[RMDB]
RNA sequence: GGGAACGACUCGAGUAGAGUCGAAAACUAAGUGUCUGCAAACAUCUGUGAUUCCUCCCAGACACAUCGCUGGCUGGAGAGGGGACGUCGCUCGAGACGUCUGCAGGGUGAGGCAGCCUCGCUGGCAACUACUAAGUGAAUUCGUUCACUUAGUAGUAAAAGAAACAACAACAACAAC
Reactivity to DMS in 0.01 (KOAc 150mM, MgCl2 10mM, bicine 150mM(pH8.5), 24C), signal-to-noise 9, nucleotides 027 to 126: c030u000a070a070g020u000g010u010c000u000g010c030a050a140a060c030a030u000c020u000g010u000g010a230u010u010c000c000u000c010c010c000a010g000a020c010a010c020a140u010c250g010c170u000g000g000c000u000g000g000a150g020a020g010g000g010g000a010c010g010u000c000g010c240u010c250g010a120g010a020c010g010u000c000u000g010c030a050g000g000g010u000g000a140g010g000c020a030g000c070c030u000c080g010c060u000g010g010c140a120
Reactivity to 2A3 in 0.01 (KOAc 150mM, MgCl2 10mM, bicine 150mM(pH8.5), 24C), signal-to-noise 9, nucleotides 027 to 126: c040u080a130a040g040u020g030u080c010u020g010c020a040a120a070c010a090u040c020u030g080u070g110a300u170u130c000c000u000c000c000c000a000g010a010c010a010c010a140u190c070g060c160u010g010g000c000u000g000g010a250g020a000g200g010g000g000a000c000g000u000c010g010c100u170c160g200a170g000a040c000g000u000c010u020g000c010a010g020g010g010u030g020a040g110g000c010a000g010c010c020u040c030g070c040u040g070g010c020a040

Description
An RNA of 177 nucleotides, treated with DMS and 2A3 and read out base by base. The reactions ran in a buffer of 150 mM KOAc, 10 mM MgCl2 and 150 mM bicine (pH 8.5), at 24 C. For 2A3 the reverse transcriptase was SuperScript II with manganese. For DMS the reverse transcriptase was MarathonRT.